[RMDB]
RNA sequence: GGGAACGACUCGAGUAGAGUCGAAAACCUGGUUUAGGGUUCCAGGCUAGCCCUAUCUAUCGGUGGAGAUGCGAGCGCUUAAGCUCAAAUUGAGUGGCUGAGUUAGUGGUGAACGUAUCCCUAUGUUAAAACGGUAGCUGCUUCGGCAGCUACCGAAUCUAACCAUAAGGUUCGCCUUAUGGUUAGAAAAAGAAACAACAACAACAAC
Reactivity to DMS in 0.01 (KOAc 150mM, MgCl2 10mM, bicine 150mM(pH8.5), 24C), signal-to-noise 2, nucleotides 027 to 156: c000c010u000g000g010u000u010u000a060g020g040g000u010u000c030c000a190g000g000c010u000a150g000c000c010c030u000a080u000c020u010a080u010c030g040g050u000g020g000a190g030a100u000g030c300g020a100g020c040g010c140u010u010a110a140g010c010u000c020a050a130a070u010u000g010a170g040u010g010g020c050u000g010a100g030u000u010a080g010u000g030g000u000g010a100a080c090g030u000a090u000c000c010c010u000a110u000g020u010u010a030a110a090a120c030g010g060u000a010g020c010u000g000c000u000u000c270g050g040c000a000g000c000u000a000c000c000g020a000a000
Reactivity to 2A3 in 0.01 (KOAc 150mM, MgCl2 10mM, bicine 150mM(pH8.5), 24C), signal-to-noise 3, nucleotides 027 to 156: c000c000u020g030g010u040u110u040a050g000g040g000u060u050c030c020a020g020g040c030u050a020g010c020c010c000u000a030u030c010u010a080u070c020g040g010u040g020g080a100g000a010u020g030c030g020a010g040c000g020c150u240u260a110a060g010c000u010c000a030a070a040u050u060g020a030g020u050g030g020c010u030g020a010g040u020u050a060g010u070g130g030u020g030a070a030c030g040u040a090u080c000c010c000u060a090u140g090u040u130a080a080a030a040c010g010g000u000a000g000c000u000g000c020u040u050c160g110g000c000a000g010c000u000a000c000c000g000a010a010